[RMDB]
Annotation
This 207-nucleotide RNA was probed chemically with 2A3. For 2A3, 421 sequencing reads were counted.
RNA sequence: GGGAACGACUCGAGUAGAGUCGAAAAGGCCCACCUCAGCAAUGCGAGGGCUCCCUGGAUUCCUCUCCCGGGUGCCUUUCAGAUCCAACAGAAACAGAUUUUUUUUUUCCUGGAAAGCAGAACUAAGAGUGGGAUGAGGAGCAGGGGUGGGAAGGACACUCAUUAGGUGGUUCGCCACCUAAUGAGUAAAAGAAACAACAACAACAAC
Reactivity to 2A3 in 0.01 (KOAc 150mM, MgCl2 10mM, bicine 150mM(pH8.5), 24C), signal-to-noise 1, nucleotides 027 to 156: g080g000c020c020c000a010c000c030u050c030a040g000c140a210a250u120g040c040g030a030g020g020g000c010u040c010c000c000u060g000g040a210u090u130c020c000u000c140u000c000c000c010g000g000g040u020g020c020c000u030u070u000c080a060g010a030u140c030c100a060a020c050a080g090a030a140a030c040a050g040a300u110u070u020u020u000u000u000u000u070u100c000c000u000g030g030a050a020a000g090c070a000g030a120a070c020u110a010a030g130a060g150u050g010g000g010a030u060g040a020g020g010a070g090c050a060g080g000g000g080u060g020g000g030a000a050g040g010a000c010